[RMDB]
RNA sequence: GGGAACGACUCGAGUAGAGUCGAAAACGACGGGUCUUCGGACCCGUCGAAAUAAUGCGUAGCUCGCGCUACGCAGGCAUCGACUAGGUCGAGCCACCUACAAAAGCUUCGAGUUCGCUCGAAGCAACUAUUAUGCAUUGUUCGCAAUGCAUAAUAGAAAAGAAACAACAACAACAAC
Reactivity to DMS in 0.01 (KOAc 150mM, MgCl2 10mM, bicine 150mM(pH8.5), 24C), signal-to-noise 7, nucleotides 027 to 126: c020g010a010c010g030g000g020u000c000u000u010c190g030g010a010c000c000c010g010u000c000g010a010a040a070u010a110a120u000g000c000g010u000a000g010c010u000c300g010c300g000c000u000a000c000g010c000a000g020g010c080a100u000c010g000a020c010u010a130g030g010u000c000g000a040g000c010c020a100c020c020u000a070c210a080a090a110a120g010c000u010u000c000g000a020g000u000u010c230g020c000u000c000g010a000a010g010c010a010a020
Reactivity to 2A3 in 0.01 (KOAc 150mM, MgCl2 10mM, bicine 150mM(pH8.5), 24C), signal-to-noise 8, nucleotides 027 to 126: c010g010a000c000g000g010g010u020c020u060u110c270g120g020a010c010c000c000g000u000c000g000a010a000a000u100a010a040u050g000c010g010u000a000g000c030u050c170g130c040g000c050u000a000c000g000c000a000g000g010c000a250u040c010g000a010c020u190a080g260g130u010c000g000a000g010c010c010a020c020c000u090a120c080a030a130a020a030g000c000u000u000c000g000a010g020u050u090c180g080c070u010c000g000a000a000g000c000a000a000
An RNA of 177 nucleotides, treated with DMS and 2A3 and read out base by base. For DMS the reverse transcriptase was MarathonRT. For 2A3, 27,030 sequencing reads were counted. For 2A3 the reverse transcriptase was SuperScript II with manganese. Conditions: 150 mM KOAc, 10 mM MgCl2 and 150 mM bicine (pH 8.5), 24 C. The DMS profile rests on 9,771 reads.